The record gives the reactivity of an RNA of 207 nucleotides to DMS and 2A3. Source: RMDB library RNAMAK, as collected in RNAgym. Reactivities are given for positions 27 through 156.
RNA sequence: GGGAACGACUCGAGUAGAGUCGAAAACCGGCCCAGUUCGCUGGGCCGGAAAUCCUAAGUCCUUAGCGUGUAAGGGUGAUGACCCAUCGGAAACGAUGGCAAGCCUAUCACGGAAACCCUAAGGAUAUGGAAAAAGACGUUCACUUCGGUGAACGUCGAAAGUUAUAAACUUCGGUUUAUAACUUUCAAAAGAAACAACAACAACAAC
Reactivity to DMS in 0.01 (KOAc 150mM, MgCl2 10mM, bicine 150mM(pH8.5), 24C), signal-to-noise 1, nucleotides 027 to 156: c000c000g020g000c040c000c000a030g010u000u000c300g020c040u000g000g010g030c000c020g010g010a000a040a030u000c000c000u000a070a210g010u000c000c000u010u010a010g010c070g030u010g070u000a100a290g000g010g070u000g020a030u020g000a070c200c000c000a000u010c020g030g000a190a160a200c000g000a020u010g000g010c070a050a110g020c000c020u000a080u010c020a010c000g030g000a130a190a030c060c070c000u000a010a010g010g010a020u000a140u020g010g000a110a110a120a190a190g000a010c000g000u000u000c020a010c000u010u010c300g070g070u010g010a010a000c000g000u000c000
Reactivity to 2A3 in 0.01 (KOAc 150mM, MgCl2 10mM, bicine 150mM(pH8.5), 24C), signal-to-noise 3, nucleotides 027 to 156: c010c000g020g020c020c000c000a020g010u060u050c120g010c130u000g010g010g000c030c000g010g000a050a000a010u010c010c000u030a110a010g030u000c010c000u030u030a070g110c060g010u030g030u080a180a300g040g000g030u030g050a250u110g070a090c000c010c000a010u000c010g060g000a090a070a040c030g010a000u020g000g020c020a060a030g000c000c000u070a070u230c000a000c010g020g010a170a210a200c050c000c000u000a000a010g000g000a000u020a030u060g010g020a070a070a050a030a030g010a000c000g000u000u000c010a000c000u030u070c140g070g000u000g000a000a020c000g000u000c010